This 177-nucleotide RNA was probed chemically with DMS and 2A3. The RNA was probed in 150 mM KOAc, 10 mM MgCl2 and 150 mM bicine (pH 8.5) at 24 C. The DMS profile rests on 1,634 reads.
RNA sequence: GGGAACGACUCGAGUAGAGUCGAAAAGCUCGGUCUGUCCGGAGAGAAGUGAUCAAGCCCCGGCUGUCGAGAGGCUCAGGGAGCCUUUACGUUUUUUCGCUUUUACCUGCCAAUCAAACUGCUACAAAUGCAGCAGAUUUUUCGAAAUCUGCUGCAUAAAAGAAACAACAACAACAAC
Reactivity to DMS in 0.01 (KOAc 150mM, MgCl2 10mM, bicine 150mM(pH8.5), 24C), signal-to-noise 1, nucleotides 027 to 126: g040c010u000c050g030g000u050c010u000g010u030c020c000g000g000a170g020a140g010a080a080g060u030g000a030u010c120a080a150g000c070c010c020c010g000g000c000u000g000u000c080g000a100g000a040g000g000c040u000c070a130g010g000g010a020g000c000c020u020u000u000a030c110g010u000u000u000u000u000u000c050g030c000u010u000u020u010a080c050c000u000g000c110c020a040a060u050c120a000a070a070c130u000g000c020u010a040c120a070a090
Reactivity to 2A3 in 0.01 (KOAc 150mM, MgCl2 10mM, bicine 150mM(pH8.5), 24C), signal-to-noise 2, nucleotides 027 to 126: g050c010u010c030g000g090u030c070u050g090u030c000c020g090g020a040g000a010g020a140a070g080u110g070a140u130c030a060a040g000c000c000c050c010g020g000c010u020g020u010c010g010a030g000a020g090g000c020u020c100a040g030g170g010a000g000c000c000u010u010u000a100c050g020u000u000u010u010u050u110c040g020c000u060u060u020u020a080c010c010u020g030c030c000a030a010u030c010a010a090a120c080u040g040c010u040a060c030a050a180